[RMDB]
RNA sequence: GGGAACGACUCGAGUAGAGUCGAAAAGUCAACAAACAAGUUUGGGUCAUAACUAGGCGUGGAAACCAGCGCCAGCACCCCACCUGUACGCGGAUCGGUGACUACCACAGCUGCGCGGCUACCCGCCCCGUGUUAAUCGGUUCGCCGAUUAACACGGAAAAGAAACAACAACAACAAC
Reactivity to 2A3 in 0.01 (KOAc 150mM, MgCl2 10mM, bicine 150mM(pH8.5), 24C), signal-to-noise 1, nucleotides 027 to 126: g030u080c010a020a010c030a050a300a070c040a100a000g060u090u020u100g060g000g050u060c060a070u060a210a050c090u080a160g040g000c020g070u110g050g020a080a000a040c010c000a080g020c010g000c000c010a000g010c020a040c030c000c000c000a040c030c030u030g020u190a060c040g000c090g060g090a080u120c080g050g030u030g050a060c060u110a100c050c030a010c040a050g010c000u050g000c050g020c050g040g010c010u000a040c000c000c000g030c000c000
Reactivity to DMS in 0.01 (KOAc 150mM, MgCl2 10mM, bicine 150mM(pH8.5), 24C), signal-to-noise 1, nucleotides 027 to 126: g000u000c000a050a130c060a090a160a020c140a050a080g010u010u000u010g020g010g000u000c110a100u040a010a040c160u000a140g000g010c020g000u000g030g000a050a110a120c070c100a200g010c060g020c090c080a100g000c140a170c120c010c000c170a050c070c010u010g040u000a050c050g000c070g010g000a050u060c090g010g010u000g000a080c010u010a180c090c080a070c140a060g000c040u000g010c030g000c070g000g000c040u010a140c020c000c030g010c040c020

The data come from the RNA Mapping Database (RMDB), library OK2TST. This 177-nucleotide RNA was probed chemically with 2A3 and DMS. Values cover nucleotides 27 to 126. For 2A3 the reverse transcriptase was SuperScript II with manganese. For DMS the reverse transcriptase was MarathonRT.